Structure probing data (2A3) for a 207-nucleotide construct. For 2A3 the reverse transcriptase was SuperScript II with manganese. It was measured as part of the RMDB library OK3TST.
[RMDB]
RNA sequence: GGGAACGACUCGAGUAGAGUCGAAAACGCCAGCUAUCACUGCUGGAUCUAAACAAUGACUGUUUGGCCAGCAUUUUGAGAUUCUUACCCGCAGAGGAUCACUUGCACUUUGCACACACUUGCACCCGUUUGCGAAAUGUCUUCACGGAUUGCGGAACUCAUGGAGGUCAUUCGUGACCUCCAUGAGAAAAGAAACAACAACAACAAC
Reactivity to 2A3 in 0.01 (KOAc 150mM, MgCl2 10mM, bicine 150mM(pH8.5), 24C), signal-to-noise 2, nucleotides 027 to 156: c070g090c020c020a030g000c050u070a010u190c030a040c050u030g000c020u010g000g010a050u040c040u150a000a020a000c040a060a220u300g180a170c180u030g050u010u030u020g000g000c080c000a010g000c030a030u130u080u030u080g140a060g000a020u010u000c000u010u070a120c040c010c020g000c020a000g000a010g020g000a020u020c020a000c070u020u090g020c010a000c080u090u110u100g000c000a020c020a000c000a000c080u060u200g020c030a060c020c010c020g050u080u150u000g040c000g020a020a090a130u140g060u090c050u050u040c060a060c070g090g010a080u000u090g000c000g020g000a040a030